[RMDB]
RNA sequence: GGGAACGACUCGAGUAGAGUCGAAAAUCAGUGUCCUCUGGGGAAGGGUCAGCUGUGAGGCAGUGGGGCGUGAGAAUACGAUGAAACAGGGAAACCUGGAAGCUGCCGAUUCCCAGGCCUUGAAGGGCGCAUACGGAUUCUUCGGAAUCCGUAUGCGAAAAGAAACAACAACAACAAC
Reactivity to DMS in 0.01 (KOAc 150mM, MgCl2 10mM, bicine 150mM(pH8.5), 24C), signal-to-noise 1, nucleotides 027 to 126: u000c000a060g040u000g000u000c010c000u000c010u010g030g030g010g010a210a160g010g000g020u010c070a060g020c010u010g000u000g020a280g030g020c020a020g000u010g000g010g020g010c010g000u010g000a170g000a120a060u010a050c070g000a070u000g000a130a070a200c000a020g000g000g000a090a180a150c000c000u010g010g000a060a140g000c030u000g000c030c010g000a220u000u000c000c000c000a120g000g010c000c010u000u000g000a120a090g000g000g000
Reactivity to 2A3 in 0.01 (KOAc 150mM, MgCl2 10mM, bicine 150mM(pH8.5), 24C), signal-to-noise 1, nucleotides 027 to 126: u110c020a040g020u020g050u060c000c000u080c070u080g050g000g010g070a030a010g000g080g020u090c050a030g000c030u020g000u020g010a050g000g010c000a000g010u050g030g000g090g030c020g030u040g010a210g080a050a120u270a130c050g030a020u100g190a130a170a020c000a000g030g030g010a070a050a030c010c000u000g050g030a040a040g030c040u010g000c000c000g020a050u020u000c030c020c020a010g090g000c000c030u090u080g030a090a090g040g030g020
Background: Chemical mapping of a 177-nucleotide RNA with DMS and 2A3. For DMS the reverse transcriptase was MarathonRT. For 2A3 the reverse transcriptase was SuperScript II with manganese.